[RMDB]
RNA sequence: GGGAACGACUCGAGUAGAGUCGAAAACAAACAGAAGAGACUGCAAACUAUGAUUCUGUUUAUAUAACAUUCUAGAAGAGGCCAAACUGUAGUAAAAAGAGGUAGAUGAAAGGUCAGCAGGGCCUGGAGUGAGGGAAGGGACUUGUCUGCAGCAUGACAGUAGGACGGUAUUCGUACCGUCCUACUGAAAAGAAACAACAACAACAAC
Reactivity to DMS in 0.01 (KOAc 150mM, MgCl2 10mM, bicine 150mM(pH8.5), 24C), signal-to-noise 1, nucleotides 027 to 156: c040a070a070a020c010a060g000a080a000g020a230g010a210c050u000g000c050a180a120a100c160u000a130u000g000a210u000u010c010u000g070u030u010u000a110u010a140u000a130a170c110a090u020u020c020u010a070g030a080a130g010a120g000g000c020c040a010a030a120c010u010g010u000a030g050u030a090a110a120a110a090g010a060g020g030u000a050g060a100u000g010a090a050a020g000g040u000c020a060g030c060a010g040g000g020c060c030u000g000g000a050g050u000g010a110g020g010g000a100a090g000g000g010a010c100u020u000g030u000c030u000g060c000a060g070c040a040u010g020a210
Reactivity to 2A3 in 0.01 (KOAc 150mM, MgCl2 10mM, bicine 150mM(pH8.5), 24C), signal-to-noise 2, nucleotides 027 to 156: c020a000a030a010c000a010g020a040a020g040a040g070a070c090u130g060c090a110a080a050c060u150a080u160g030a090u000u010c010u000g000u030u060u040a130u010a000u010a030a090c030a070u130u010c030u100a050g030a110a000g020a060g040g000c060c030a060a050a020c030u070g000u050a050g010u030a050a170a020a070a010g050a020g000g010u030a050g000a040u050g070a080a040a020g010g010u080c040a020g040c030a010g020g030g010c010c000u040g030g000a060g020u070g020a050g010g020g020a000a030g030g000g010a020c010u050u060g000u030c010u050g050c000a010g000c010a030u140g130a060
Source: RMDB library OK3TST, as collected in RNAgym. The record gives the reactivity of an RNA of 207 nucleotides to DMS and 2A3. Values cover nucleotides 27 to 156. As a SHAPE reagent, 2A3 marks flexible, mostly unpaired nucleotides at the ribose 2'-OH. For DMS the reverse transcriptase was MarathonRT. The 2A3 profile rests on 1,051 reads.